RNA sequence: GGGAACGACUCGAGUAGAGUCGAAAACGGCAUUUCCCCAGCAGCAAUGACCUACCAGGCUGCGGUGCGGCUCGCCGCACAGGUCAUCCCUCAUCGGGCGCGUCCUGCGUCCUUCCACGCCAACCCAAGACCAUUGCUUCCUUCGGGAAGCAAUGAAUCAUUGGGUAUGGUUCGCCAUACCCAAUGAAAAAGAAACAACAACAACAAC
Reactivity to DMS in 0.01 (KOAc 150mM, MgCl2 10mM, bicine 150mM(pH8.5), 24C), signal-to-noise 1, nucleotides 027 to 156: c050g010g030c080a200u000u010u000c020c060c020c070a110g060c060a070g000c070a050a080u010g010a090c000c000u000a130c010c060a100g010g010c020u000g000c010g030g030u010g000c000g030g000c060u010c270g050c020c040g070c010a090c010a030g020g000u020c010a080u010c010c070c020u000c090a220u020c120g000g020g040c020g000c020g010u020c150c040u020g020c010g000u000c000c000u010u010c040c040a020c040g030c070c000a090a050c010c000c040a110a080g010a110c050c000a030u000u000g000c000u010u000c000c000u000u000c300g060g000g020a020a000g010c010a010a010u000g000a050a130
Reactivity to 2A3 in 0.01 (KOAc 150mM, MgCl2 10mM, bicine 150mM(pH8.5), 24C), signal-to-noise 1, nucleotides 027 to 156: c040g050g000c030a060u050u050u010c000c000c010c010a060g000c010a000g010c010a000a280u130g020a090c010c000u080a160c060c060a020g060g000c050u030g010c030g020g000u020g000c000g030g000c070u130c150g130c020c000g000c010a010c000a000g000g020u020c020a070u070c030c020c010u130c010a110u150c040g000g030g000c010g000c010g030u180c020c080u110g010c000g050u020c000c010u030u020c060c020a080c060g020c010c010a030a030c020c000c000a080a010g060a070c020c020a010u010u000g000c000u000u020c010c000u030u090c120g040g000g000a000a000g000c000a010a000u000g000a000a030
The record gives the reactivity of an RNA of 207 nucleotides to DMS and 2A3.
Reactivities are given for positions 27 through 156.
Conditions: 150 mM KOAc, 10 mM MgCl2 and 150 mM bicine (pH 8.5), 24 C.